[RMDB]
RNA sequence: GGGAACGACUCGAGUAGAGUCGAAAAGAUAUGGAUCGUACAGAGCUUUUGACGCUGAUGUAUCGGAAACGAUACUGCCAGCGAUAAGCUCGUACGAUCCUAAGUCAAAGUUGAUCUUCGGAUCAACCGCUACAGACUUCUUCGGAAGUCUGUAGCGAAAAGAAACAACAACAACAAC
Reactivity to DMS in 0.01 (KOAc 150mM, MgCl2 10mM, bicine 150mM(pH8.5), 24C), signal-to-noise 1, nucleotides 027 to 126: g000a110u000a300u010g000g000a000u000c000g010u030a010c020a150g020a030g010c010u000u000u020u000g010a280c040g030c000u000g000a160u010g000u000a000u010c000g020g000a170a020a280c010g000a030u000a010c020u000g030c160c000a010g000c000g010a040u000a000a020g000c000u000c000g010u010a000c000g010a000u000c010c000u000a040a080g000u000c000a220a110a190g000u000u010g000a000u000c010u020u010c220g000g000a010u000c000a020a010c000
Reactivity to 2A3 in 0.01 (KOAc 150mM, MgCl2 10mM, bicine 150mM(pH8.5), 24C), signal-to-noise 1, nucleotides 027 to 126: g030a000u090a030u080g000g010a010u030c000g000u020a030c300a270g020a020g030c030u190u090u090u280g300a150c040g000c000u000g010a060u030g000u010a000u010c010g010g060a070a030a030c000g000a100u020a020c000u060g220c130c040a000g000c050g000a020u040a130a000g000c020u000c030g000u000a000c000g000a000u000c000c000u000a000a000g010u000c090a070a120a160g010u030u000g010a000u010c010u120u120c300g140g000a020u050c050a010a000c040
An RNA of 177 nucleotides, treated with DMS and 2A3 and read out base by base. The reactions ran in a buffer of 150 mM KOAc, 10 mM MgCl2 and 150 mM bicine (pH 8.5), at 24 C. Source: RMDB library TTRDES, as collected in RNAgym. Values cover nucleotides 27 to 126. For 2A3, 1,365 sequencing reads were counted.